[RMDB]
RNA sequence: GGGAACGACUCGAGUAGAGUCGAAAAAAUUCGAUUGUGACAUCGAAACAUUUUCUUACAAUAUGAUUUGGCAAAAGCAAGCACCUAAAAGAAUGAAGUCAAGAAUGUUUACCUUUUGUGCAAGUUGCUUACAAAGACAGUUCGCUGUCUUUGUAAGAAAAGAAACAACAACAACAAC
Reactivity to 2A3 in 0.01 (KOAc 150mM, MgCl2 10mM, bicine 150mM(pH8.5), 24C), signal-to-noise 2, nucleotides 027 to 126: a010a030u040u000c020g000a010u040u080g090u100g080a010c020a040u000c000g000a020a040a020c050a040u110u070u030u020c010u040u140a090c070a110a110u120a120u300g040a020u000u000u070g010g000c020a030a000a000a030g010c000a010a000g010c010a020c010c020u130a110a050a000a050g080a060a070u200g060a080a010g100u050c010a040a010g040a070a040u070g000u020u040u040a030c010c000u010u060u020u020g040u040g130c000a010a060g030u030u030g020
Reactivity to DMS in 0.01 (KOAc 150mM, MgCl2 10mM, bicine 150mM(pH8.5), 24C), signal-to-noise 5, nucleotides 027 to 126: a100a050u000u000c020g010a010u000u000g020u010g010a100c170a050u000c020g010a020a020a080c140a070u010u000u010u000c000u000u010a120c140a060a070u000a070u010g000a050u000u000u000g010g020c040a030a030a040a040g020c110a040a070g010c010a020c060c070u000a060a040a080a090g000a070a090u010g010a090a090g000u000c070a040a040g000a060a070u000g010u000u000u000a120c220c030u000u000u000u000g010u000g010c040a040a050g000u000u000g010